This 177-nucleotide RNA was probed chemically with DMS. The RNA was probed in 150 mM KOAc, 10 mM MgCl2 and 150 mM bicine (pH 8.5) at 24 C. It was measured as part of the RMDB library OK2TRN. The DMS profile rests on 1,018 reads.
[RMDB]
RNA sequence: GGGAACGACUCGAGUAGAGUCGAAAAACUGCAUGCGGCAAGGUAGAAACAUGAUAGCUUACAUUGAAACUGUCCCGCUUGAGACGAAAAUAUAGUUGGCAGGUUCAUUGGAUGACUAAAAGGGACCCCAGUGUGGUAGGUUCGCCUACCACACUGGAAAAGAAACAACAACAACAAC
Reactivity to DMS in 0.01 (KOAc 150mM, MgCl2 10mM, bicine 150mM(pH8.5), 24C), signal-to-noise 1, nucleotides 027 to 126: a080c040u010g010c040a120u000g020c030g000g020c050a060a050g020g010u000a050g000a160a080a070c120a060u010g000a160u000a020g000c000u000u000a090c030a000u000u000g000a040a020a050c020u000g000u010c000c020c070g010c040u000u020g000a210g000a180c090g030a120a010a080a080u010a170u000a010g000u000u000g000g010c000a030g030g020u000u000c010a050u000u000g030g010a050u000g000a120c030u020a030a070a100a150g000g000g010a150c050c070